[RMDB]
RNA sequence: GGGAACGACUCGAGUAGAGUCGAAAAUUAAAAUAGGUCCAGUUAAACAUUGUCAUUGUACUAAAGAGGCUACUUGCUACAAUAGUGUUACUCAUGCAUACUAUUGUUUCAAACAUGCAUUGGGAUGUGAUUAUCUGUAUAACCCUUUUGUUAUAGACGCGUUGAUUACAUUCGUGUAAUCAACGCGAAAAGAAACAACAACAACAAC
Reactivity to 2A3 in 0.01 (KOAc 150mM, MgCl2 10mM, bicine 150mM(pH8.5), 24C), signal-to-noise 1, nucleotides 027 to 156: u140u030a030a000a020a000u130a030g020g000u000c020c020a010g020u030u070a070a100a050c030a010u010u070g070u020c020a000u000u050g000u040a020c050u070a030a130a000g130a030g070g020c010u010a030c010u090u020g000c020u000a000c000a040a050u010a020g010u000g020u010u050a060c040u020c070a040u180g000c010a010u050a060c000u010a050u010u060g040u000u020u060c050a040a090a050c000a000u070g000c000a000u010u070g020g010g020a030u000g050u000g040a010u040u030a010u120c020u010g030u080a040u040a100a050c070c000c000u020u020u000u040g050u130u040a050u010a050g040a040